[RMDB]
RNA sequence: GGGAACGACUCGAGUAGAGUCGAAAAGAAAUGACUCCUCCAAGUCUUGGAGUAGGUCAUUGGGUGGAUCCUUUAUUUCCCUAUGUGGGCCACUGGAUGGCUCCUCCAUGUCUUGGCGGAGGUCAAAGACUGGGUCACAAUUCGUUGUGACCCAGUCAAAAGAAACAACAACAACAAC
Reactivity to 2A3 in 0.01 (KOAc 150mM, MgCl2 10mM, bicine 150mM(pH8.5), 24C), signal-to-noise 2, nucleotides 027 to 126: g050a010a050a010u090g010a000c000u030c000c000u000c000c010a000a000g020u000c010u000u000g010g010a040g010u090a080g040g110u000c000a000u000u000g100g010g040u010g010g050a300u160c010c000u080u060u090a250u050u160u120c030c000c000u060a120u190g120u110g010g010g000c010c000a010c000u050g100g010a000u010g000g000c020u030c040c000u010c000c000a020u070g060u000c000u000u000g020g010c000g050g030a030g020g040u020c000a010a010a010
Annotation: Chemical mapping of a 177-nucleotide RNA with 2A3. It was measured as part of the RMDB library RFM100. Reactivities are given for positions 27 through 126. Values are in units of 0.01, from 0 to 300, in steps of 10. For 2A3, 1,339 sequencing reads were counted.